[RMDB]
RNA sequence: GGGAACGACUCGAGUAGAGUCGAAAAGGCUAGUUUGCUAUCGUAGUCUUUUGGCUACGCUCUCGGAGGUGAAUUUGAGCGGUACAGGAUCACCUCCAACUGUACCGAUAGCAUUUUUAUAGCCGAAGGGUGGCUGCUAGUUCGCUAGCAGUUACCCAAAAGAAACAACAACAACAAC
Reactivity to DMS in 0.01 (KOAc 150mM, MgCl2 10mM, bicine 150mM(pH8.5), 24C), signal-to-noise 9, nucleotides 027 to 126: g010g000c010u000a010g010u020u000u000g010c010u010a000u000c000g020u000a010g010u000c000u010u030u020u020g010g000c010u010a000c010g010c010u000c020u010c300g000g010a020g000g010u020g020a110a120u020u040u000g010a010g000c000g000g010u000a000c000a050g000g000a100u020c090a140c010c000u000c010c010a040a020c050u000g000u000a000c020c010g000a010u000a010g000c000a010u010u010u010u030u050a090u000a020g020c000c000g010a090a120
Reactivity to 2A3 in 0.01 (KOAc 150mM, MgCl2 10mM, bicine 150mM(pH8.5), 24C), signal-to-noise 9, nucleotides 027 to 126: g000g000c000u010a010g040u020u020u010g000c000u000a000u000c000g000u000a000g010u000c020u050u230u110u160g000g000c000u000a000c000g000c000u000c010u020c040g030g020a030g010g040u160g110a170a180u180u160u150g010a040g000c000g000g000u010a000c000a010g040g060a110u100c050a040c060c000u000c000c000a000a000c000u010g000u000a000c000c000g000a000u000a000g000c000a000u000u000u000u010u060a160u010a010g000c000c000g000a050a010